The data come from the RNA Mapping Database (RMDB), library M2RFPK. This 207-nucleotide RNA was probed chemically with DMS and 2A3. For 2A3, 7,932 sequencing reads were counted. For DMS the reverse transcriptase was MarathonRT.

RNA sequence: GGGAACGACUCGAGUAGAGUCGAAAAAUGUGCGCCAAAGAAACAUUGUUUAUGCAAAGGCACUUCGCAAUGUGUGCUCAAACAUUGCUUAUUCAAACACGCUUCACAAUGUGCGACAAAGAAACAUAAAACGUUUAGUACUUCGGUACUAAACGAAGUUAUGGUUAGGGUUCGCCCUAACCAUAACAAAAGAAACAACAACAACAAC
Reactivity to DMS in 0.01 (KOAc 150mM, MgCl2 10mM, bicine 150mM(pH8.5), 24C), signal-to-noise 3, nucleotides 027 to 156: a060u020g030u020g010c040g000c050c100a060a130a180g010a120a080a040c020a030u000u000g010u000u000u000a080u010g030c040a060a080a110g030g010c010a010c020u000u000c120g020c080a090a060u010g010u000g020u000g020c080u030c110a080a110a050c050a040u000u000g010c030u000u000a050u000u000c030a060a080a080c060a040c070g030c040u010u000c050a090c080a060a120u000g050u000g010c040g030a180c070a060a120a100g020a100a070a110c060a050u000a050a050a070a180c010g000u000u000u010a020g000u000a000c020u000u000c290g070g010u000a000c000u000a000a000a000c010g010a000a060
Reactivity to 2A3 in 0.01 (KOAc 150mM, MgCl2 10mM, bicine 150mM(pH8.5), 24C), signal-to-noise 8, nucleotides 027 to 156: a000u120g010u050g040c050g010c010c030a110a050a050g070a040a070a010c010a030u030u050g060u060u130u100a130u190g050c070a060a080a060g130g000c010a010c000u100u070c050g000c010a010a010u010g010u000g020u040g060c050u090c190a070a070a010c010a000u000u000g000c000u040u100a130u110u130c070a010a070a030c080a010c120g010c010u040u040c020a010c010a020a030u040g020u020g010c010g040a010c060a010a090a020g130a060a130a010c060a020u190a080a070a010a020c000g000u000u000u000a000g010u000a000c000u010u030c220g070g000u000a000c000u000a000a000a000c000g010a020a000